[RMDB]
The record gives the reactivity of an RNA of 177 nucleotides to DMS and 2A3.
For 2A3, 23,702 sequencing reads were counted.
2A3 adducts were read by reverse transcription with SuperScript II with manganese.
RNA sequence: GGGAACGACUCGAGUAGAGUCGAAAAGAUAUGGACUAGCUAUAAUCUUGGACACGUUGAAAUCGGAAACGAUGGAGUGUACCCAAGGUAGCUAGUCCUAAGUCAAAGUCUCGCUUCGGCGAGACAACACGAUAGUAUGGUUCGCCAUACUAUCGUGAAAAGAAACAACAACAACAAC
Reactivity to DMS in 0.01 (KOAc 150mM, MgCl2 10mM, bicine 150mM(pH8.5), 24C), signal-to-noise 6, nucleotides 027 to 126: g010a040u000a300u000g000g010a010c000u000a000g020c000u000a050u010a210a120u000c010u000u000g000g000a060c010a010c000g010u000u010g000a100a130a020u000c000g000g000a120a070a160c000g000a010u000g000g000a120g020u000g010u000a120c230c000c000a010a010g010g000u000a000g000c000u000a000g010u000c000c010u000a010a070g010u000c040a070a080a160g010u010c000u000c000g020c000u000u010c200g020g010c000g000a010g000a000c000a030a110
Reactivity to 2A3 in 0.01 (KOAc 150mM, MgCl2 10mM, bicine 150mM(pH8.5), 24C), signal-to-noise 7, nucleotides 027 to 126: g030a010u080a050u140g000g010a000c010u000a000g020c010u020a030u040a300a240u180c010u010u010g000g020a020c000a000c030g290u300u080g030a040a050a000u010c010g000g030a080a040a040c010g000a010u020g000g030a040g010u020g000u180a160c000c030c000a000a000g020g000u010a000g000c000u000a000g000u000c000c000u000a010a000g010u000c020a040a030a030g010u010c000u010c000g020c010u060u110c300g170g000c000g020a000g000a000c010a000a010
The data come from the RNA Mapping Database (RMDB), library TTRDEL.